[RMDB]
RNA sequence: GGGAACGACUCGAGUAGAGUCGAAAAUCGCCAAACGAGCUCGACGAGUCGCAGUCUGUUGGCAAUGGAGGCGGCGCUGCGGAAAGCCGUGGAACCAAACGCCCGCGCGCUUCGGUCGGCGACGACGGUUUCAACUAUCAUUCGUGAUAGUUGAAACAAAAGAAACAACAACAACAAC
Reactivity to 2A3 in 0.01 (KOAc 150mM, MgCl2 10mM, bicine 150mM(pH8.5), 24C), signal-to-noise 6, nucleotides 027 to 126: u070c020g000c010c000a020a090a020c050g040a040g060c040u050c070g060a050c020g030a050g070u060c010g010c030a010g050u020c050u110g070u070u060g020g000c000a030a060u130g060g020a070g080g030c000g000g020c020g000c030u090g000c030g060g050a270a060a020g010c010c000g000u030g010g040a080a050c070c010a210a070a050c100g010c020c000c000g000c000g000c010g000c000u030u040c020g050g050u070c020g010g010c000g010a020c020g010a020c040g060
Reactivity to DMS in 0.01 (KOAc 150mM, MgCl2 10mM, bicine 150mM(pH8.5), 24C), signal-to-noise 8, nucleotides 027 to 126: u010c070g010c020c030a060a100a130c060g000a130g020c030u000c030g010a120c070g020a120g020u000c020g010c100a070g010u000c030u000g010u000u000g010g020c060a100a150u000g000g010a120g000g010c030g010g000c020g010c040u010g010c040g010g000a110a050a080g020c030c010g040u000g000g010a090a120c070c090a050a100a160c290g000c110c020c030g000c030g000c150g000c020u000u010c030g000g010u010c030g010g010c020g000a050c030g010a060c110g010